[RMDB]
RNA sequence: GGGAACGACUCGAGUAGAGUCGAAAAAGGGAAGAAAAUAAUUUAGAAAGGAGAUUCCGCCCCAGCUUGUGGUGCGGCCGAAAGGCUGUAAGGCAUCCCGGAGAGGGGAGGCAAGGCGAAAGCCAAAAACGGUACACCAUCUUCGGAUGGUGUACAACAAGUUGUAAUAGUUCGCUAUUACAACUUGAAAAGAAACAACAACAACAAC
Reactivity to 2A3 in 0.01 (KOAc 150mM, MgCl2 10mM, bicine 150mM(pH8.5), 24C), signal-to-noise 2, nucleotides 027 to 156: a000g050g040g000a020a030g080a020a150a060a040u250a120a080u170u210u250a170g040a080a090a040g050g030a070g010a040u060u000c010c000g010c010c000c000c010a030g060c040u100u090g060u070g050g050u010g000c020g020g000c000c000g030a020a010a010g000g000c010u010g040u080a060a020g130g000c010a030u020c020c020c000g020g010a020g010a020g020g010g010g010a010g020g000c080a060a050g010g000c000g000a060a030a020g000c010c010a040a000a050a000a080c080g020g000u000a000c000a000c010c000a010u010c000u030u030c090g020g000a010u010g000g020u010g000u000a000c000a000a000
Reactivity to DMS in 0.01 (KOAc 150mM, MgCl2 10mM, bicine 150mM(pH8.5), 24C), signal-to-noise 2, nucleotides 027 to 156: a100g000g000g020a140a060g000a140a030a110a120u000a120a100u000u010u010a230g010a130a100a100g000g000a100g030a210u010u000c030c020g040c000c000c020c020a170g010c020u000u000g070u000g030g020u000g000c030g020g020c010c040g060a080a080a160g040g020c000u010g020u040a070a080g020g020c030a050u000c060c000c050g020g010a130g020a220g040g010g000g020a050g000g010c070a130a080g020g000c000g010a080a120a240g040c040c000a050a040a050a050a180c060g000g020u000a020c000a010c000c000a010u000c020u000u000c300g030g020a010u000g020g030u000g000u000a000c000a040a040